Chemical mapping of a 177-nucleotide RNA with DMS.
For DMS the reverse transcriptase was MarathonRT.
The DMS profile rests on 1,504 reads.
RNA sequence: GGGAACGACUCGAGUAGAGUCGAAAACGUAUGUACAGGAGCGUCCUUGCUCUCAGGGCUUUAAAAUGGUUGGGUGCCAUGGGUUUCAUGUUACCGAGUGACUCUCCCACGGCAAGAAGGUCACGUAUCGAACGACAACAUUCGUGUUGUCGUUCGAAAAAGAAACAACAACAACAAC
Reactivity to DMS in 0.01 (KOAc 150mM, MgCl2 10mM, bicine 150mM(pH8.5), 24C), signal-to-noise 2, nucleotides 027 to 126: c070g020u020a040u000g020u020a040c100a110g010g010a070g020c070g000u010c070c110u000u010g010c040u010c050u040c060a130g010g000g030c030u000u000u010a070a080a130a040u000g010g000u000u010g010g010g000u000g020c030c010a030u010g010g000g050u010u000u010c070a020u000g010u010u000a100c050c060g000a160g070u000g000a020c030u000c110u000c000c010c030a040c090g010g030c040a130a140g010a080a050g000g000u000c040a030c040g030u010a100